The data come from the RNA Mapping Database (RMDB), library TTRDEL.
The record gives the reactivity of an RNA of 177 nucleotides to 2A3 and DMS.
The 2A3 profile rests on 4,696 reads.
The reactions ran in a buffer of 150 mM KOAc, 10 mM MgCl2 and 150 mM bicine (pH 8.5), at 24 C.
For DMS, 1,999 sequencing reads were counted.
RNA sequence: GGGAACGACUCGAGUAGAGUCGAAAAGAUAUGGACCGUACCUAGCGCCGCAUAGUCGGAAACGACUAUGGAAGGAACUACGCUACGUACGGUCCUAAGUCAAAACUAUUUGCUUCGGCAAAUAGAAGUUACGAUCCUAGUUCGCUAGGAUCGUAACAAAAGAAACAACAACAACAAC
Reactivity to 2A3 in 0.01 (KOAc 150mM, MgCl2 10mM, bicine 150mM(pH8.5), 24C), signal-to-noise 2, nucleotides 027 to 126: g030a040u040a030u080g000g000a000c000c010g010u000a010c000c040u010a010g010c050g070c070c000g000c030a000u000a000g000u000c020g000g060a060a050a020c000g000a000c000u000a000u010g020g080a140a120g030g010a050a070c120u220a050c300g000c000u000a010c000g000u000a000c000g000g000u000c000c000u010a000a000g000u010c000a000a000a030a060c000u000a010u010u000u000g000c020u040u100c300g100g000c000a000a010a000u010a000g030a040a010
Reactivity to DMS in 0.01 (KOAc 150mM, MgCl2 10mM, bicine 150mM(pH8.5), 24C), signal-to-noise 2, nucleotides 027 to 126: g030a080u000a300u000g000g000a000c010c000g020u000a010c000c040u000a000g020c010g010c020c010g030c010a010u000a000g020u000c020g020g000a080a060a130c020g010a020c000u000a000u000g000g020a130a090g030g000a160a140c110u020a230c040g000c000u000a010c300g000u000a020c010g010g000u000c000c000u000a010a040g000u000c030a060a060a100a170c000u000a010u000u000u000g010c020u000u010c130g000g010c000a010a000a010u000a000g010a060a130